RNA sequence: GGGAACGACUCGAGUAGAGUCGAAAAGAUAUGGAAUCCAUGCAGACAUGCCUGGCUUCGGAAACGAAGCACAGGCAACAGCUGUGCAUGGAUUCCUAAGUCAAAACCAUCACCUUCGGGUGAUGGACCAAUUUUAGGUCUUCGGACCUAAAAUUGGAAAAGAAACAACAACAACAAC
Reactivity to DMS in 0.01 (KOAc 150mM, MgCl2 10mM, bicine 150mM(pH8.5), 24C), signal-to-noise 2, nucleotides 027 to 126: g010a040u010a200u000g000g000a010a000u000c000c000a000u000g000c000a040g010a130c150a120u000g040c000c000u010g020g010c000u030u010c000g010g000a020a030a060c000g000a020a000g050c000a050c000a020g010g010c020a020a040c260a210g010c290u000g030u020g010c000a030u010g000g000a000u000u000c000c000u000a020a090g010u000c020a100a090a130a180c010c000a010u000c000a010c010c010u010u020c250g030g000g010u000g000a000u000g000g010a080
Reactivity to 2A3 in 0.01 (KOAc 150mM, MgCl2 10mM, bicine 150mM(pH8.5), 24C), signal-to-noise 2, nucleotides 027 to 126: g000a000u040a020u040g000g010a000a020u020c010c000a010u020g060c000a060g160a300c080a260u300g020c020c000u000g010g000c010u000u020c010g000g000a050a000a000c010g020a010a010g020c240a130c000a180g030g010c010a010a000c010a000g000c030u280g000u000g020c000a000u010g000g000a000u000u000c000c000u000a000a010g000u000c010a000a040a030a180c000c000a000u000c000a000c000c010u060u100c300g250g010g020u010g000a010u000g000g010a020
This 177-nucleotide RNA was probed chemically with DMS and 2A3.
For 2A3, 3,342 sequencing reads were counted.
Values cover nucleotides 27 to 126.
The DMS profile rests on 2,039 reads.